[RMDB]
RNA sequence: GGGAACGACUCGAGUAGAGUCGAAAACGUUUUAAACCAUUUAUAAUAAAGGAUACCAAAUUCAAUAUCAGGGCGUUCGAUAUACAAUGCAUGCGUAGCUUCAAGCAAUUGUUCGUAGUUAUUUGUAAUAUAACGAUCAAAGUUAUGGAACAACUCGCCACCAUUCCAUAUUCGUAUGGAAUGGUGGAAAAGAAACAACAACAACAAC
Reactivity to 2A3 in 0.01 (KOAc 150mM, MgCl2 10mM, bicine 150mM(pH8.5), 24C), signal-to-noise 1, nucleotides 027 to 156: c020g080u000u000u150u260a160a130a060c060c000a110u200u200u180a290u210a230a090u190a170a100a030g060g000a000u060a060c020c000a060a140a000u130u170c030a000a130u050a050u190c060a000g000g030g020c110g140u060u030c110g000a050u000a020u000a300c130a060a090u080g000c000a000u030g050c020g020u030a020g140c000u120u030c030a090a040g000c000a080a190u080u000g000u000u080c030g020u030a000g060u000u160a060u050u140u150g030u000a000a000u080a030u000a050a020c020g020a030u060c110a080a100a000g000u040u040a020u020g100g060a060a000c000a000a000c060u050c030g040